[RMDB]
RNA sequence: GGGAACGACUCGAGUAGAGUCGAAAAGUUCAACGCUGACAAAGGCUUCGGCUUCAUCACUCCUGACGAUGGCUCUAAAGACGUGUUCGUACACUUCUCUGCUAUCCAGAACGAUGGCUACAAAUCCGAAUAUGCUACCCUUCGGGGUAGCAUAUUCAAAAGAAACAACAACAACAAC
Reactivity to DMS in 0.01 (KOAc 150mM, MgCl2 10mM, bicine 150mM(pH8.5), 24C), signal-to-noise 2, nucleotides 027 to 126: g010u030u010c080a030a130c150g000c080u000g020a070c140a030a140a070g000g000c000u000u000c150g000g000c050u030u010c040a060u000c040a050c080u020c040c030u000g000a130c130g000a040u000g010g000c000u000c130u010a040a050a070g000a090c070g020u000g040u000u040c140g010u060a080c060a040c070u000u010c000u000c060u010g030c020u030a020u000c000c100a050g000a080a140c120g000a080u000g020g010c060u010a040c180a030a100a070u090c050c090
Reactivity to 2A3 in 0.01 (KOAc 150mM, MgCl2 10mM, bicine 150mM(pH8.5), 24C), signal-to-noise 5, nucleotides 027 to 126: g020u050u070c030a050a040c070g000c040u040g030a070c070a060a150a020g070g000c000u070u090c060g030g000c000u050u040c030a030u020c000a000c040u050c010c010u020g010a030c060g060a050u100g010g000c020u000c010u150a140a150a040g030a030c040g010u000g050u060u110c070g070u150a010c020a020c010u040u020c020u010c020u050g000c010u000a000u010c010c020a020g010a060a000c060g000a040u050g050g020c030u060a060c050a060a080a090u030c050c020
The record gives the reactivity of an RNA of 177 nucleotides to DMS and 2A3. The reactions ran in a buffer of 150 mM KOAc, 10 mM MgCl2 and 150 mM bicine (pH 8.5), at 24 C.